[RMDB]
RNA sequence: GGGAACGACUCGAGUAGAGUCGAAAACGGCUCGGGGCCAUGGGAGGAUACCGGAGAUCGAUAUGACGGCAGCAGUGCCUUGGCGCUUCUGCACGAUUGCGCGGCCCGCGACCCCCGGGGUGCUGCGAAGGACGCACGUUUUCGAACGUGCGUCCUUAAAAGAAACAACAACAACAAC
Reactivity to DMS in 0.01 (KOAc 150mM, MgCl2 10mM, bicine 150mM(pH8.5), 24C), signal-to-noise 1, nucleotides 027 to 126: c090g060g010c010u000c010g000g050g040g000c040c020a020u020g000g040g030a040g000g000a200u050a200c190c020g000g000a070g000a160u000c000g000a140u010a000u040g010a210c290g010g000c000a000g000c020a000g000u000g010c000c040u010u040g000g020c010g050c000u000u000c000u000g000c010a090c040g000a170u000u000g030c070g010c000g030g000c130c030c000g000c080g020a250c050c020c000c050c020g000g000g000g000u050g000c120u120g000c140g000
Reactivity to 2A3 in 0.01 (KOAc 150mM, MgCl2 10mM, bicine 150mM(pH8.5), 24C), signal-to-noise 1, nucleotides 027 to 126: c100g060g040c020u000c000g000g000g010g000c010c010a030u090g080g000g000a190g120g010a040u150a090c000c000g090g010a060g000a080u050c020g060a040u000a090u210g120a010c020g100g030c000a000g030c000a000g000u000g000c080c000u000u200g100g000c000g000c000u040u000c000u070g010c070a100c050g020a070u050u100g000c170g010c020g020g000c060c000c000g030c020g040a090c000c000c000c000c000g010g000g000g010u120g050c000u020g000c010g010